Source: RMDB library OK1LIB, as collected in RNAgym. The record gives the reactivity of an RNA of 177 nucleotides to 2A3. Values cover nucleotides 27 to 126.

RNA sequence: GGGAACGACUCGAGUAGAGUCGAAAAACGCUCGCGUCGGUGGGGGCUUCGAUUCGGAUCAGCUCCGAACCACGCAAUUCGUAGACCUCUUCGUUCCAGAAGUCGAGGGCCCGUCCCAGCAGGGUGCGGUAACUCAUGGCUUCGGCCAUGAGUUACCAAAAGAAACAACAACAACAAC
Reactivity to 2A3 in 0.01 (KOAc 150mM, MgCl2 10mM, bicine 150mM(pH8.5), 24C), signal-to-noise 1, nucleotides 027 to 126: a000c060g040c110u090c080g000c000g010u000c180g010g000u030g000g000g000g030g000c010u090u180c040g260a290u120u120c120g100g030a010u010c070a000g090c000u000c000c000g090a200a070c000c000a000c070g020c060a000a090u110u090c080g000u090a080g020a010c000c000u030c000u000u040c000g080u030u080c100c030a080g010a140a010g130u130c070g030a090g040g020g020c090c000c000g040u000c000c030c040a070g000c040a000g000g000g000u080g030c000